[RMDB]
RNA sequence: GGGAACGACUCGAGUAGAGUCGAAAAGGCAAGCGCACUCUGUGUCACAUCGAUAUAUCCAGCCUCAUGUGAUGACAAUUUGUAAGCUUGCUAGAAUAAGGGGGAGCUUCGCUUAUCCAUGCGGCAACAUAGUUUACUGAUUCGUCAGUAAACUAUGAAAAGAAACAACAACAACAAC
Reactivity to 2A3 in 0.01 (KOAc 150mM, MgCl2 10mM, bicine 150mM(pH8.5), 24C), signal-to-noise 9, nucleotides 027 to 126: g040g000c000a000a010g000c010g010c010a010c020u050c040u030g010u010g020u010c000a000c000a020u080c120g050a010u040a010u030a050u220c090c050a030g070c030c010u020c010a000u020g030u030g020a020u090g110a010c010a020a070u040u040u070g040u070a110a030g000c000u000u020g000c000u010a020g050a050a090u210a100a100g030g010g010g000g000a030g020c000u090u080c030g010c030u080u070a050u080c010c010a030u090g020c010g030g000c010a030a010
Reactivity to DMS in 0.01 (KOAc 150mM, MgCl2 10mM, bicine 150mM(pH8.5), 24C), signal-to-noise 9, nucleotides 027 to 126: g010g000c010a010a010g040c020g000c100a030c040u000c050u000g020u000g010u000c000a010c020a010u000c170g010a060u020a130u020a100u020c110c100a090g010c120c130u000c020a020u000g000u000g000a020u000g010a030c020a020a060u010u000u000g010u010a090a170g020c000u000u000g000c000u000a040g010a090a070u020a090a080g000g010g000g010g000a120g010c080u010u010c040g010c040u010u010a070u020c040c050a080u010g010c050g010g010c120a100a220